Overview: Chemical mapping of a 177-nucleotide RNA with 2A3 and DMS. It was measured as part of the RMDB library RFMREP. For DMS, 2,957 sequencing reads were counted. Reactivities are given for positions 27 through 126.

[RMDB]
RNA sequence: GGGAACGACUCGAGUAGAGUCGAAAAAACACGUUUGAUAUUUGAUAUCCAUGUGGUAUCCCUAUGAAUUUGCAACACCCUCGCAGCAUUCAUAGAACCUCUUCUACACGUCGACAAGAAGCAAUUCGGUAUAUGUUAACUUCGGUUAACAUAUACCAAAAGAAACAACAACAACAAC
Reactivity to 2A3 in 0.01 (KOAc 150mM, MgCl2 10mM, bicine 150mM(pH8.5), 24C), signal-to-noise 4, nucleotides 027 to 126: a000a000c040a020c020g030u060u110u150g030a040u010a050u060u140u190g100a040u020a010u050c010c040a040u060g020u020g010g070u070a080u050c020c020c020u000a040u050g040a030a050u040u060u110g030c020a060a040c020a140c050c000c020u030c040g000c020a010g000c030a030u010u060c010a000u030a040g050a010a020c000c020u060c000u050u010c000u040a030c030a010c120g120u060c040g050a050c020a070a030g060a030a000g050c040a030a110u140u120c050
Reactivity to DMS in 0.01 (KOAc 150mM, MgCl2 10mM, bicine 150mM(pH8.5), 24C), signal-to-noise 4, nucleotides 027 to 126: a070a030c030a000c010g020u000u000u010g020a020u000a020u000u020u010g020a040u000a010u000c010c300a040u000g000u000g010g010u000a060u010c010c040c010u000a060u000g010a050a030u000u000u000g000c000a090a070c100a120c060c030c030u000c090g020c040a060g000c120a050u000u000c040a020u000a060g010a080a130c100c070u000c060u000u000c020u000a060c070a070c050g000u000c050g000a040c120a100a080g000a060a040g000c190a050a070u010u000c090